[RMDB]
RNA sequence: GGGAACGACUCGAGUAGAGUCGAAAAACGGUGCCCUAUGAUGACAAAAUCAAGGCUUGUUUCUCUACAUUCGCAGUUGCCGCCUAAGAGCUUUCGCCCUGCCAGGCUUGAGAGCUAAUGCUGCAGAAUCCUUCCUUGGAUGUCUGAGGGCCGCCGAUCUAUCCGAUUAGUUCGCUAAUCGGAUAGAAAAAGAAACAACAACAACAAC
Reactivity to DMS in 0.01 (KOAc 150mM, MgCl2 10mM, bicine 150mM(pH8.5), 24C), signal-to-noise 3, nucleotides 027 to 156: a120c040g030g020u000g020c020c010c010u000a200u020g000a170u000g010a120c070a050a090a150a160u020c050a050a020g000g020c140u010u010g020u000u000u000c010u000c020u000a060c030a060u000u000c070g030c040a200g000u000u010g020c160c130g020c050c020u010a080a160g010a050g000c010u010u010u010c080g000c000c020c030u010g040c220c150a150g000g040c020u000u030g030a100g010a120g040c010u000a020a050u000g010c000u020g010c130a070g010a080a060u000c070c050u000u010c030c020u030u000g010g010a160u000g000u000c000u000g000a070g000g010g010c000c040g030c010c000g010a170
Reactivity to 2A3 in 0.01 (KOAc 150mM, MgCl2 10mM, bicine 150mM(pH8.5), 24C), signal-to-noise 6, nucleotides 027 to 156: a000c010g010g000u030g010c010c000c010u110a260u150g060a040u050g000a000c020a030a180a060a120u120c000a020a020g020g000c100u060u050g050u040u130u010c080u020c030u050a100c030a120u040u060c030g010c020a020g030u070u070g080c050c030g030c010c030u140a150a030g030a020g040c000u040u080u090c040g010c040c020c030u070g080c060c040a020g000g000c010u120u170g040a040g000a010g010c000u020a040a020u050g010c020u010g000c020a060g020a000a010u030c010c040u050u010c000c000u010u010g020g010a030u030g030u000c000u030g060a010g010g000g000c020c040g020c000c000g010a010
Source: RMDB library RFM130, as collected in RNAgym. Chemical mapping of a 207-nucleotide RNA with DMS and 2A3. The RNA was probed in 150 mM KOAc, 10 mM MgCl2 and 150 mM bicine (pH 8.5) at 24 C.